Chemical mapping of a 207-nucleotide RNA with DMS. Values cover nucleotides 27 to 156.
[RMDB]
RNA sequence: GGGAACGACUCGAGUAGAGUCGAAAAUCCUAAGUCACUCCGUUGAUCGUCUGCCAAAACAAUUUGGGUUUGUCUUGGCCAGCAACAGCAGUCGGAAACGACUGACAUGCUGGAGACAAACCCAAAUUGUUUUGGCAGACGGGAGGAGUGAUAUGGAGUAUGUACUCUAGUUCGCUAGAGUACAUACAAAAGAAACAACAACAACAAC
Reactivity to DMS in 0.01 (KOAc 150mM, MgCl2 10mM, bicine 150mM(pH8.5), 24C), signal-to-noise 1, nucleotides 027 to 156: u000c020c000u020a070a190g010u010c010a020c000u000c010c000g020u010u010g010a060u010c010g020u000c010u000g060c010c020a000a010a010a020c000a000a010u000u000u010g030g000g040u000u000u010g010u000c020u010u020g050g080c000c030a010g000c010a030a080c090a210g000c000a000g030u000c010g050g030a150a130a300c040g020a040c020u010g000a060c020a300u010g010c020u000g020g010a090g000a010c020a000a030a020c010c000c010a020a010a000u000u000g000u010u000u010u010g010g000c020a010g000a000c000g020g010g000a040g030g010a030g030u010g010a010u000a030u020g020g000a300